[RMDB]
RNA sequence: GGGAACGACUCGAGUAGAGUCGAAAAUUAGCACCUCGUUAGGUGAGGCGGCUACACGAACAUAGGCCACUGACCCCGAACGUCGAGAGACGCCCCGGGUCAGGACAGCUCUUCCCGGCUUAAGGGUAAAAUCACAACGUCUUCGGACGUUGUGAAAGCAGUUAUUUACGUUCGCGUAAAUAACUGCAAAAGAAACAACAACAACAAC
Reactivity to 2A3 in 0.01 (KOAc 150mM, MgCl2 10mM, bicine 150mM(pH8.5), 24C), signal-to-noise 2, nucleotides 027 to 156: u120u020a000g000c000a010c010c010u020c050g080u150u290a150g010g180u210g050a010g010g040c160g060g000c010u040a040c070a010c100g160a180a020c020a140u220a130g160g000c050c000a050c030u020g000a010c010c000c000c060g040a050a020c000g030u010c000g020a060g000a010g000a120c000g000c030c050c010c050g010g000g000u000c000a000g000g020a020c020a000g000c010u020c040u060u000c000c000c000g010g020c040u110u160a090a040g030g000g030u050a040a020a000a140u040c010a010c000a000a000c000g000u010c020u070u110c220g080g000a020c010g010u000u000g000u000g000a000a000a000